[RMDB]
RNA sequence: GGGAACGACUCGAGUAGAGUCGAAAACGACAGCUUUUCGAAGCUGUCGAUUGGCAAAGGCAAGGACCGGCCAGACAAAGGUCCGAUAGCAAAUCGUAACGAAGCUCGCCUGCUUCGGCAGGCGAAAAUCAAUCCAGAAGUUCGCUUCUGGAUUGAUAAAAGAAACAACAACAACAAC
Reactivity to 2A3 in 0.01 (KOAc 150mM, MgCl2 10mM, bicine 150mM(pH8.5), 24C), signal-to-noise 1, nucleotides 027 to 126: c000g000a000c000a010g000c000u010u040u070u140c140g090a010a000g000c000u000g000u000c000g000a020u020u050g010g050c050a080a190a230g090g000c010a030a090g000g010a000c000c000g050g010c010c040a060g040a140c090a060a120a020g000g020u000c000c000g040a060u030a020g050c030a110a010a060u110c050g080u130a050a160c110g010a020a010g050c010u040c000g000c030c000u000g030c050u050u030c100g070g000c010a010g090g080c000g000a020a000a000
Reactivity to DMS in 0.01 (KOAc 150mM, MgCl2 10mM, bicine 150mM(pH8.5), 24C), signal-to-noise 3, nucleotides 027 to 126: c040g020a000c010a000g000c000u000u000u000u000c170g010a020a020g000c000u000g010u000c000g010a030u000u000g000g020c120a070a130a080g010g010c050a090a100g010g000a000c010c000g000g010c000c000a120g010a100c130a040a060a110g010g010u000c000c000g020a090u000a080g010c060a070a090a070u010c080g010u000a080a070c120g010a090a100g000c080u000c020g010c010c010u010g000c010u000u020c180g020g010c000a010g000g020c000g010a000a010a090